[RMDB]
RNA sequence: GGGAACGACUCGAGUAGAGUCGAAAAGAUAUGGAUGAUGGACAUGUCCCAGGCUCGGAAACGAGCCUGAGGACAACAGCCAUAUCCUAAGUCAAAACACUGCAUGGCCUUCGGGCCAUGCAGUGAAGAAAAGGACUGAGUUCGCUCAGUCCUUUUCAAAAGAAACAACAACAACAAC
Reactivity to DMS in 0.01 (KOAc 150mM, MgCl2 10mM, bicine 150mM(pH8.5), 24C), signal-to-noise 2, nucleotides 027 to 126: g000a020u000a210u000g010g000a020u000g010a040u000g000g000a060c140a120u000g020u000c000c000c000a010g010g000c000u000c000g000g000a130a110a210c000g000a010g020c000c000u000g000a040g030g010a010c000a020a040c240a100g000c010c000a010u000a040u000c000c030u010a030a110g000u010c040a100a040a150a250c020a000c000u020g000c010a000u000g050g030c000c000u000u000c200g030g020g030c000c000a000u010g000c000a000g000u010g010a050a050

This 177-nucleotide RNA was probed chemically with DMS. The DMS profile rests on 1,188 reads. The data come from the RNA Mapping Database (RMDB), library TTRDEL. The RNA was probed in 150 mM KOAc, 10 mM MgCl2 and 150 mM bicine (pH 8.5) at 24 C.